[RMDB]
RNA sequence: GGGAACGACUCGAGUAGAGUCGAAAAGAUAUGGAAAGGGAGCUUGGUUGGCUUUGGACAUGGCACCUCUCGGAAACGAGAGACUGCCAACAGCCAACGGGCCAACCAAGCUCCCUUUCCUAAGUCAGUGUUAAACUGUGUUCGCACAGUUUAACACAAAAGAAACAACAACAACAAC
Reactivity to DMS in 0.01 (KOAc 150mM, MgCl2 10mM, bicine 150mM(pH8.5), 24C), signal-to-noise 2, nucleotides 027 to 126: g000a030u010a300u010g000g000a010a000a060g000g010g020a050g040c020u000u010g000g060u010u000g030g010c010u010u020u000g000g000a060c170a300u010g000g040c010a010c110c000u000c020u000c010g030g010a120a120a230c000g030a030g030a020g030a070c300u000g020c010c000a000a050c300a150g010c020c010a010a050c300g000g000g000c010c020a000a000c010c000a000a000g000c000u000c020c000c020u020u000u010c000c000u000a020a060g010u000c060a090
Chemical mapping of a 177-nucleotide RNA with DMS. Values are in units of 0.01, from 0 to 300, in steps of 10. The RNA was probed in 150 mM KOAc, 10 mM MgCl2 and 150 mM bicine (pH 8.5) at 24 C. DMS adducts were read by reverse transcription with MarathonRT.